[RMDB]
RNA sequence: GGGAACGACUCGAGUAGAGUCGAAAAUACAUGGCAAGGUUUACCUUGGUGGAGAAUUCUAGGAACUUCUCCACGAAUUCGCGCUCGACGGGUUCGCGCACUAGUACGUAGGGGGCAUUGUUGGCUUCGCGCCACGCCGAGGAUCGCGUGACUGUACUAUAUUUGGUCUGUUCGCAGACCAAAUAUAAAAAGAAACAACAACAACAAC
Reactivity to DMS in 0.01 (KOAc 150mM, MgCl2 10mM, bicine 150mM(pH8.5), 24C), signal-to-noise 1, nucleotides 027 to 156: u000a070c090a100u020g020g050c010a060a060g000g030u000u000u000a060c100c020u020u000g000g040u000g020g010a090g010a050a060u000u000c030u000a290g030g000a140a060c070u000u000c090u010c000c010a010c000g010a020a120u000u000c020g000c050g040c110u000c030g000a090c030g030g000g030u000u000c040g000c040g010c100a070c030u000a080g000u000a080c040g000u000a090g020g000g070g120g120c180a100u000u020g000u000u000g020g000c070u000u000c090g010c080g040c000c020a000c020g030c000c020g010a200g050g000a120u000c040g010c020g050u000g020a110c020u010g000u000a100c180
Reactivity to 2A3 in 0.01 (KOAc 150mM, MgCl2 10mM, bicine 150mM(pH8.5), 24C), signal-to-noise 1, nucleotides 027 to 156: u120a010c030a010u050g020g000c010a000a020g000g000u080u180u110a220c020c020u050u110g010g000u000g000g010a030g000a040a000u130u040c130u220a290g080g120a010a020c050u010u000c020u000c000c020a000c000g010a000a010u020u030c020g000c000g000c050u020c070g040a050c030g000g140g000u070u100c030g000c010g070c050a040c030u060a030g050u120a070c060g090u110a120g040g020g000g000g010c010a010u060u060g060u000u040g030g000c010u000u090c050g010c020g030c080c000a010c020g000c020c010g030a090g080g020a060u060c020g010c000g020u050g010a000c040u060g050u080a050c030

This 207-nucleotide RNA was probed chemically with DMS and 2A3. For 2A3 the reverse transcriptase was SuperScript II with manganese. The data come from the RNA Mapping Database (RMDB), library OK3TST. The DMS profile rests on 2,872 reads. The 2A3 profile rests on 713 reads. Values cover nucleotides 27 to 156. Conditions: 150 mM KOAc, 10 mM MgCl2 and 150 mM bicine (pH 8.5), 24 C. For DMS the reverse transcriptase was MarathonRT.